[RMDB]
RNA sequence: GGGAACGACUCGAGUAGAGUCGAAAAUGGCUGUGUGCACUCGUCACCACUCGCUUGCUGUGUGCCAGUUUGUCGCAAUAUUUUAAUAGCGACCGCAUACCUACUGCGAUAUCGCAGUUAAGCGACGUGCUGUUGUGCAGUUCGCUGCACAACAGCAAAAAGAAACAACAACAACAAC
Reactivity to DMS in 0.01 (KOAc 150mM, MgCl2 10mM, bicine 150mM(pH8.5), 24C), signal-to-noise 2, nucleotides 027 to 126: u000g010g000c000u000g030u010g010u040g000c000a030c040u000c100g020u000c020a040c070c040a080c050u020c020g030c000u000u000g010c040u000g010u000g010u000g000c010c050a060g010u000u000u000g010u000c010g010c020a030a070u000a040u010u000u000u000a020a070u000a110g010c010g020a000c030c140g000c030a010u010a080c070c070u010a010c050u000g000c030g010a280u000a100u000c020g010c010a000g000u010u000a070a080g010c010g000a030c240g030
Reactivity to 2A3 in 0.01 (KOAc 150mM, MgCl2 10mM, bicine 150mM(pH8.5), 24C), signal-to-noise 2, nucleotides 027 to 126: u160g060g000c040u020g040u020g040u030g120c030a010c050u070c010g100u040c020a050c040c000a010c020u000c000g010c000u020u070g000c020u000g000u000g000u040g050c030c020a070g010u050u130u140g010u010c000g000c020a080a060u070a100u110u290u100u130a240a180u130a100g000c000g010a020c000c020g070c030a060u180a090c030c030u050a020c020u010g000c010g200a220u050a100u220c010g010c010a000g030u010u170a000a000g020c000g030a010c090g060
Chemical mapping of a 177-nucleotide RNA with DMS and 2A3. For DMS, 1,623 sequencing reads were counted. For DMS the reverse transcriptase was MarathonRT. For 2A3 the reverse transcriptase was SuperScript II with manganese.